Structure probing data (DMS and 2A3) for a 207-nucleotide construct. The data come from the RNA Mapping Database (RMDB), library PDB130.
RNA sequence: GGGAACGACUCGAGUAGAGUCGAAAACUCCAAAUAACAGGGGUCAAGGUCGGCCAGUGAGACGAUGGGGGAUAAGCUUCAUCGUCGAGAGGGAAACAGCCCGGAUCACCAGCUAAGGCCCCUAAAUGACCGCUCAGUGAUAAAGGAGGUAGGGGUGGUCUUGCAUUAUGUUCGCAUAAUGCAAGACAAAAGAAACAACAACAACAAC
Reactivity to DMS in 0.01 (KOAc 150mM, MgCl2 10mM, bicine 150mM(pH8.5), 24C), signal-to-noise 1, nucleotides 027 to 156: c030u000c010c000a090a160a180u000a060a160c090a100g010g040g080g040u000c010a070a300g000g000u000c020g060g020c030c040a110g010u010g000a170g010a010c040g010a030u000g010g000g010g040g050a220u000a050a210g040c010u010u000c010a040u000c000g030u000c000g010a070g040a160g000g000g000a240a060a180c170a090g010c000c000c000g010g030a160u000c060a050c020c000a040g010c040u010a130a300g000g000c000c040c050c010u000a000a040a090u010g010a080c010c010g010c050u010c010a130g030u000g000a050u010a050a060a000g020g000a060g000g000u000a080g010g000g010g040u000g020
Reactivity to 2A3 in 0.01 (KOAc 150mM, MgCl2 10mM, bicine 150mM(pH8.5), 24C), signal-to-noise 2, nucleotides 027 to 156: c030u020c020c020a100a050a040u300a120a110c140a030g020g010g000g020u000c050a110a010g100g000u120c080g140g020c070c000a050g030u040g060a060g000a010c000g000a020u020g000g000g000g050g000a120u080a300a030g150c010u030u020c000a010u000c000g020u000c000g000a020g000a010g000g000g010a070a210a060c040a100g100c050c020c020g000g000a020u100c050a030c080c020a000g010c060u040a020a140g070g050c030c020c010c000u010a000a000a000u030g010a000c010c040g040c060u030c070a050g050u030g080a060u070a120a130a030g060g000a020g010g000u080a050g010g000g000g000u100g020
The 2A3 profile rests on 1,023 reads.